The data come from the RNA Mapping Database (RMDB), library OK1LIB.
Structure probing data (2A3 and DMS) for a 177-nucleotide construct.
For DMS, 82,790 sequencing reads were counted.
The RNA was probed in 150 mM KOAc, 10 mM MgCl2 and 150 mM bicine (pH 8.5) at 24 C.

[RMDB]
RNA sequence: GGGAACGACUCGAGUAGAGUCGAAAAGUGAGCGCCGCCCUGCCGGAUCAAGGGCGUGAUAUUUUUGUCACGAACGACGAUCCAUGCCAAUAUGACAAUUAGCUUGCUAUGUUUAUUGGCUUGCAAGAUUUAUCAUCAGUUUCGACUGAUGAUAAAUAAAAGAAACAACAACAACAAC
Reactivity to 2A3 in 0.01 (KOAc 150mM, MgCl2 10mM, bicine 150mM(pH8.5), 24C), signal-to-noise 9, nucleotides 027 to 126: g090u070g030a060g050c060g010c030c010g030c010c010c010u040g040c050c080g000g000a000u010c020a060a090g020g010g010c010g000u010g000a010u000a150u040u250u090u210u240g040u000c000a000c010g010a060a010c020g070a030c200g000a010u000c000c010a010u060g000c000c000a020a010u050a070u190g050a050c030a060a210u150u040a030g040c050u050u160g010c010u040a020u080g010u010u030u010a020u010u010g010g000c040u020u080g030c040a080a040g010
Reactivity to DMS in 0.01 (KOAc 150mM, MgCl2 10mM, bicine 150mM(pH8.5), 24C), signal-to-noise 9, nucleotides 027 to 126: g010u010g010a080g010c050g020c050c050g010c040c010c020u000g020c070c240g010g000a010u010c010a210a230g000g000g010c010g010u000g000a000u000a010u030u020u030u050u020g020u000c000a010c000g000a050a030c030g010a180c230g000a020u000c010c000a120u020g000c000c000a010a010u000a020u040g020a010c020a040a100u030u010a030g000c030u020u010g010c010u000a040u010g000u000u000u000a020u010u000g000g000c000u010u020g000c100a100a110g010